About this RNA:
Structure probing data (2A3 and DMS) for a 177-nucleotide construct. Conditions: 150 mM KOAc, 10 mM MgCl2 and 150 mM bicine (pH 8.5), 24 C. Source: RMDB library M2PK90, as collected in RNAgym. The 2A3 profile rests on 1,242 reads.
RNA sequence: GGGAACGACUCGAGUAGAGUCGAAAAUACAUUGUGGAAACACCAGGGCCACAUUACUUAGGUAUCAAGAUGAACGACGUGGAACUAGCUUAUUAAAUUGGCAAAACAUAGACACCAAGAAAUAGAAGUUACUAAUCGUCUUCGGACGAUUAGUAACAAAAGAAACAACAACAACAAC
Reactivity to 2A3 in 0.01 (KOAc 150mM, MgCl2 10mM, bicine 150mM(pH8.5), 24C), signal-to-noise 2, nucleotides 027 to 126: u100a040c070a070u080u080g030u040g000g000a000a180a000c010a010c040c040a070g000g050g000c000c000a040c000a050u020u080a050c040u080u060a080g040g000u060a040u090c030a060a000g030a150u070g030a050a050c030g040a010c020g040u040g030g010a050a030c060u010a040g010c030u070u050a040u110u240a260a120a040u100u030g020g000c000a160a000a030a000c020a030u150a010g050a010c000a000c020c010a010a040g080a030a050a010u110a010g150a180a020
Reactivity to DMS in 0.01 (KOAc 150mM, MgCl2 10mM, bicine 150mM(pH8.5), 24C), signal-to-noise 2, nucleotides 027 to 126: u000a080c070a130u000u000g010u000g000g010a110a120a110c060a140c060c070a020g010g000g000c010c030a020c080a050u000u000a010c130u000u040a060g000g000u000a040u010c050a070a090g000a080u000g010a070a080c060g000a140c100g030u000g010g000a050a040c060u000a110g000c020u010u000a060u010u010a030a100a120u010u000g000g010c010a010a060a040a100c120a090u000a030g000a110c090a050c020c030a030a060g000a030a020a090u010a150g000a110a040